An RNA of 177 nucleotides, treated with DMS and read out base by base.

[RMDB]
RNA sequence: GGGAACGACUCGAGUAGAGUCGAAAAGAACUAUCGGCUGCUUGGAGGAAUUUCGCGAGAUCCUGCCCACAGGGGUGCUGCACUCGGCGGAUCGUUUUCGAGCGGCUGCUGCACCGCACGCUGUGGACAUCGUGCACCCUUUCGAGGGUGCACGAUGAAAAGAAACAACAACAACAAC
Reactivity to DMS in 0.01 (KOAc 150mM, MgCl2 10mM, bicine 150mM(pH8.5), 24C), signal-to-noise 1, nucleotides 027 to 126: g000a110a110c100u000a070u020c040g000g000c060u000g000c020u000u000g000g020a080g000g040a130a080u000u000u000c020g000c080g010a060g000a070u020c060c050u000g000c080c000c020a080c110a050g020g000g000g030u000g000c070u000g000c100a020c060u000c030g030g000c000g000g000a010u000c180g020u000u000u000u000c060g000a070g040c020g000g000c140u000g040c190u000g040c090a100c040c040g000c030a110c160g020c040u000g010u000g010g010a160
The RNA was probed in 150 mM KOAc, 10 mM MgCl2 and 150 mM bicine (pH 8.5) at 24 C. DMS adducts were read by reverse transcription with MarathonRT.